[RMDB]
RNA sequence: GGGAACGACUCGAGUAGAGUCGAAAAGGUGGGUCGGCCCCGCUCGAGGUGCCCUACCUGCGGGCGUCGCCGUGGCUGCUAUGGCGCAAGCGGGUCGUCUGGCUCCUGGUACUUUUUGCUGCCGAGGCAAACCCGAGCCUUUCGAGGCUCGGGUUUGAAAAGAAACAACAACAACAAC
Reactivity to 2A3 in 0.01 (KOAc 150mM, MgCl2 10mM, bicine 150mM(pH8.5), 24C), signal-to-noise 1, nucleotides 027 to 126: g090g000u070g030g000g000u000c020g040g000c020c010c010c060g000c000u060c070g030a040g090g050u060g020c020c030c000u090a050c000c010u090g210c070g010g030g030c000g110u030c000g020c020c000g050u030g000g010c170u110g070c010u100a120u210g010g000c000g000c040a060a040g000c000g000g000g000u020c020g010u030c000u040g040g000c010u050c010c000u000g040g010u020a060c000u070u140u020u200u000g000c030u000g000c000c000g090a060g000g000